[RMDB]
RNA sequence: GGGAACGACUCGAGUAGAGUCGAAAAGAUAUGGACGUACUGAGACAUGCUCGUAAUCGGAAACGAUUACGGAGCAACAGCUCAGGUACGUCCUAAGUCAAAACAACGAGACUUCGGUCUCGUUGAACCAACUUAACCUGUUCGCAGGUUAAGUUGGAAAAGAAACAACAACAACAAC
Reactivity to 2A3 in 0.01 (KOAc 150mM, MgCl2 10mM, bicine 150mM(pH8.5), 24C), signal-to-noise 3, nucleotides 027 to 126: g000a000u030a000u070g010g000a000c000g000u010a010c020u020g030a010g030a050c170a250u210g000c000u010c010g020u000a000a000u010c010g020g000a010a020a000c010g000a000u010u000a010c020g060g040a020g030c020a080a070c110a100g000c000u000c000a010g090g060u010a000c000g000u010c000c000u010a000a000g010u000c020a000a020a110a200c010a000a000c000g000a000g000a010c010u120u210c300g130g000u000c000u000c000g000u000u000g000a000a010
Reactivity to DMS in 0.01 (KOAc 150mM, MgCl2 10mM, bicine 150mM(pH8.5), 24C), signal-to-noise 4, nucleotides 027 to 126: g000a020u000a110u010g000g000a030c000g010u010a010c000u000g040a020g020a070c090a110u010g010c000u000c000g010u000a000a000u000c000g010g010a050a030a050c000g010a030u000u010a010c000g040g010a020g000c010a060a050c230a150g010c010u000c010a050g020g020u010a000c020g010u000c000c000u000a000a060g000u000c000a110a080a110a230c020a000a010c000g000a000g000a020c000u000u020c260g060g010u000c000u000c010g010u000u000g000a050a200